[RMDB]
RNA sequence: GGGAACGACUCGAGUAGAGUCGAAAACGGUUCAGGAUACAAUGUUUGACAAUUGUUUUAAUUGUCAUGUUGGCAUCUACUAAUGAGGCUAAAACAUUUUGAAAUUUAAGACAUCUUUCUCGACAGCAACCACAAUCAUUUCUGAUCAGUCCGUGCAGUUAACAGUGGCAUUCGUGCCACUGUUAACAAAAGAAACAACAACAACAAC
Reactivity to 2A3 in 0.01 (KOAc 150mM, MgCl2 10mM, bicine 150mM(pH8.5), 24C), signal-to-noise 4, nucleotides 027 to 156: c050g020g010u070u040c040a070g000g040a040u030a110c040a040a040u090g050u060u090u100g020a000c010a000a020u020u040g240u170u230u290u300a050a030u020u020g000u000c020a010u040g010u060u060g010g020c030a020u020c010u080a110c030u070a080a070u150g020a010g050g000c010u020a030a040a070a040c060a060u020u100u080u220g070a120a120a060u130u170u100a070a030g040a030c020a100u050c020u020u120u020c040u040c040g020a020c030a030g010c010a020a040c020c000a050c040a090a040u090c040a040u020u150u030c040u020g050a070u090c050a020g070u040c020c030g040u050g040c060a030
Reactivity to DMS in 0.01 (KOAc 150mM, MgCl2 10mM, bicine 150mM(pH8.5), 24C), signal-to-noise 2, nucleotides 027 to 156: c030g050g000u000u000c030a060g000g010a210u010a040c030a080a070u000g020u000u000u000g010a070c000a020a020u010u000g070u000u050u000u010a000a020u000u000g020u000c000a050u000g000u020u000g000g050c060a010u000c060u000a300c060u080a090a140u000g020a080g010g040c040u000a050a110a060a040c050a100u000u000u000u000g010a080a080a080u010u000u000a100a170g000a100c060a090u000c060u010u000u000c040u000c030g000a080c030a140g010c010a070a100c050c010a080c090a050a110u010c030a160u000u010u000c120u010g000a100u020c010a070g010u000c000c000g020u000g020c050a170

The data come from the RNA Mapping Database (RMDB), library OK3TST. This 207-nucleotide RNA was probed chemically with 2A3 and DMS. The reactions ran in a buffer of 150 mM KOAc, 10 mM MgCl2 and 150 mM bicine (pH 8.5), at 24 C. Values cover nucleotides 27 to 156. DMS (dimethyl sulfate) methylates the pairing face of unpaired adenines and cytosines. For DMS, 2,498 sequencing reads were counted.